[RMDB]
RNA sequence: GGGAACGACUCGAGUAGAGUCGAAAACAGCGAGAGGCGUAGGGGAGAGGGCCGCGGUGCUCUGGAGUAGAGGCUUCUUGCUUCGAAACACCAUCGAUCGUCCCUUCUUCUUUUACCUUCUCCUGGCCGUAGAAGUAAACUUCGGUUUACUUCUACGAAAAGAAACAACAACAACAAC
Reactivity to DMS in 0.01 (KOAc 150mM, MgCl2 10mM, bicine 150mM(pH8.5), 24C), signal-to-noise 4, nucleotides 027 to 126: c020a010g000c160g010a020g010a010g020g020c190g030u000a020g000g000g000g000a010g010a040g010g000g010c170c010g010c000g030g010u000g000c000u000c010u010g000g000a070g010u010a080g000a010g010g000c000u000u020c280u000u010g010c000u000u000c000g000a180a120a150c010a000c240c000a010u000c000g010a120u010c010g000u000c010c000c000u010u010c010u000u000c000u010u000u010u000a010c010c000u000u000c000u000c000c000u000g000g010c120
Reactivity to 2A3 in 0.01 (KOAc 150mM, MgCl2 10mM, bicine 150mM(pH8.5), 24C), signal-to-noise 3, nucleotides 027 to 126: c020a010g020c060g070a010g000a000g040g000c140g060u010a000g000g010g010g020a020g000a010g010g000g010c020c010g040c020g020g020u000g000c000u000c010u020g010g010a000g010u010a010g000a010g000g000c010u170u070c070u170u300g000c000u010u000c020g010a010a000a000c000a020c130c020a000u000c000g050a300u010c000g010u020c000c000c000u060u080c010u010u010c030u010u030u020u020a000c000c000u020u010c000u020c000c000u020g020g000c010
About this RNA
The data come from the RNA Mapping Database (RMDB), library VIROID. An RNA of 177 nucleotides, treated with DMS and 2A3 and read out base by base. Reactivities are rounded to 0.1 and cut off at 0 and 3. The RNA was probed in 150 mM KOAc, 10 mM MgCl2 and 150 mM bicine (pH 8.5) at 24 C. The 2A3 profile rests on 7,626 reads. For DMS the reverse transcriptase was MarathonRT. 2A3 adducts were read by reverse transcription with SuperScript II with manganese.